Conditions: 150 mM KOAc, 10 mM MgCl2 and 150 mM bicine (pH 8.5), 24 C. An RNA of 177 nucleotides, treated with DMS and 2A3 and read out base by base. Values are in units of 0.01, from 0 to 300, in steps of 10. For 2A3 the reverse transcriptase was SuperScript II with manganese. For DMS, 2,329 sequencing reads were counted.
RNA sequence: GGGAACGACUCGAGUAGAGUCGAAAACAGCAGCGAUGUGAGCAUCCGGACCACCCAGCGGGCGCGGCGUUCGACGGUGGUCGGAUCGUCGGGACCUAGUGAGUUGAGGAAUGCCGCGGCCAGGGCCGCGACCUGGGAUAUUCGUAUCCCAGGUCGCAAAAGAAACAACAACAACAAC
Reactivity to DMS in 0.01 (KOAc 150mM, MgCl2 10mM, bicine 150mM(pH8.5), 24C), signal-to-noise 2, nucleotides 027 to 126: c060a100g000c050a050g010c080g000a080u010g010u010g000a110g020c080a070u010c000c000g030g000a060c060c020a140c000c010c200a100g010c140g010g010g000c020g010c020g020g030c030g000u000u000c020g000a040c070g030g020u000g000g010u010c060g020g010a010u000c010g020u000c030g010g000g000a090c020c020u000a050g010u000g000a120g010u010u010g000a100g010g000a060a030u010g000c030c030g010c010g000g000c020c030a140g000g000g050c300c240
Reactivity to 2A3 in 0.01 (KOAc 150mM, MgCl2 10mM, bicine 150mM(pH8.5), 24C), signal-to-noise 1, nucleotides 027 to 126: c020a000g030c000a000g030c030g070a100u080g040u010g100a060g070c020a030u010c000c000g090g070a040c000c020a020c000c000c020a030g170c100g000g020g000c010g040c000g040g000c000g000u030u070c010g040a050c030g010g090u000g000g180u060c040g090g080a000u000c020g020u000c000g030g020g090a100c010c050u040a040g050u110g300a170g010u130u220g060a050g000g040a010a030u010g010c020c000g010c030g010g000c000c000a000g000g080g050c060c120